[RMDB]
Structure probing data (2A3) for a 177-nucleotide construct.

RNA sequence: GGGAACGACUCGAGUAGAGUCGAAAAUUUGCUGACACUUUACCGGCGGCCCCGAGGAUCGCUGAACGGAGCAUUGCCGGGAUUCACGUUUUCGAGACAUGUCGCCGAUUUCCUCGCUUGCCACAAAUACUGAUCGCUGGUUCGCCAGCGAUCAGUAAAAAGAAACAACAACAACAAC
Reactivity to 2A3 in 0.01 (KOAc 150mM, MgCl2 10mM, bicine 150mM(pH8.5), 24C), signal-to-noise 2, nucleotides 027 to 126: u110u160u080g000c050u090g000a000c030a000c150u090u130u040a160c000c000g000g000c040g000g000c000c000c000c000g020a120g080g000a100u230c090g000c110u100g000a070a090c010g000g000a030g030c060a150u150u300g030c030c000g010g000g020a000u070u000c000a000c140g110u070u020u060u110c280g000a190g020a120c040a170u110g030u060c000g000c000c000g020a070u110u000u040c000c000u000c050g040c040u070u110g030c000c000a100c030a000a060a100